Source information
An RNA of 177 nucleotides, treated with DMS and 2A3 and read out base by base. For DMS the reverse transcriptase was MarathonRT.

RNA sequence: GGGAACGACUCGAGUAGAGUCGAAAAACAAAGACACGCUUCGCAGAUGACCUCCUCGUUGGUGCGUGUCGGUAAUGUUGUCAGUCACAGGCAACAGUUAACGAUCUGCGUAAAUAAUAAGAAAAAACAUCAGAGGAAGAUUCGUCUUCCUCUGAUGAAAAGAAACAACAACAACAAC
Reactivity to DMS in 0.01 (KOAc 150mM, MgCl2 10mM, bicine 150mM(pH8.5), 24C), signal-to-noise 3, nucleotides 027 to 126: a050c070a070a130a060g000a010c000a000c000g020c000u000u010c020g010c010a020g010a010u000g010a030c040c030u000c110c020u000c100g000u010u000g000g020u000g010c000g010u000g000u000c000g020g010u010a090a110u000g000u000u010g000u000c010a100g010u010c270a100c300a110g000g010c010a000a000c010a030g000u000u010a030a020c010g020a000u000c020u000g000c000g000u010a030a040a060u010a090a060u000a060a100g040a000a030a050a070a120a090
Reactivity to 2A3 in 0.01 (KOAc 150mM, MgCl2 10mM, bicine 150mM(pH8.5), 24C), signal-to-noise 3, nucleotides 027 to 126: a000c060a010a040a010g000a000c010a000c020g010c010u070u090c020g000c000a000g000a020u010g010a000c000c000u030c000c020u100c100g090u070u050g000g010u000g010c000g000u010g000u000c000g010g010u050a070a020u010g000u000u010g000u000c030a040g140u130c070a060c040a130g000g000c000a000a000c000a020g010u000u050a010a010c020g010a010u020c000u000g000c000g000u000a010a030a000u140a030a040u180a090a100g220a100a160a010a000a000a000